[RMDB]
RNA sequence: GGGAACGACUCGAGUAGAGUCGAAAAUCUAAUGUCUUCGGACAUUAGAAAAGGCGGAGGCUCGCACCUAGCGACGGGCGCAAGGACGCACGUGACUGCGAAAAAUCACCGAGUUCGCUCGGUGAAAUCCUAAAUUUAAGUUCGCUUAAAUUUAGGAAAAAGAAACAACAACAACAAC
Reactivity to 2A3 in 0.01 (KOAc 150mM, MgCl2 10mM, bicine 150mM(pH8.5), 24C), signal-to-noise 4, nucleotides 027 to 126: u000c000u010a010a000u000g000u000c010u020u040c180g110g000a000c000a000u010u010a000g000a010a100a000a010g070g010c040g030g060a060g060g100c050u030c060g010c020a070c020c020u020a030g020c010g050a040c030g000g020g000c030g000c030a050a150g130g020a070c010g020c020a020c020g030u040g120a100c040u110g000c030g040a060a010a000a030a070u040c000a000c000c000g000a000g010u060u070c190g030c090u000c010g000g010u010g010a000a000a000
Reactivity to DMS in 0.01 (KOAc 150mM, MgCl2 10mM, bicine 150mM(pH8.5), 24C), signal-to-noise 8, nucleotides 027 to 126: u000c000u000a000a000u000g000u000c000u000u010c200g040g010a010c000a010u000u000a000g000a010a040a090a100g010g020c040g010g010a120g020g020c060u000c050g020c050a100c050c040u000a070g010c030g010a060c040g000g010g010c020g010c060a120a120g010g010a120c030g000c030a030c050g010u000g010a100c050u010g000c030g010a010a060a050a110a130u000c000a010c000c010g000a020g010u000u010c230g010c000u000c000g010g000u000g000a010a040a060

Structure probing data (2A3 and DMS) for a 177-nucleotide construct. Values cover nucleotides 27 to 126. For DMS, 13,597 sequencing reads were counted. As a SHAPE reagent, 2A3 marks flexible, mostly unpaired nucleotides at the ribose 2'-OH. The reactions ran in a buffer of 150 mM KOAc, 10 mM MgCl2 and 150 mM bicine (pH 8.5), at 24 C.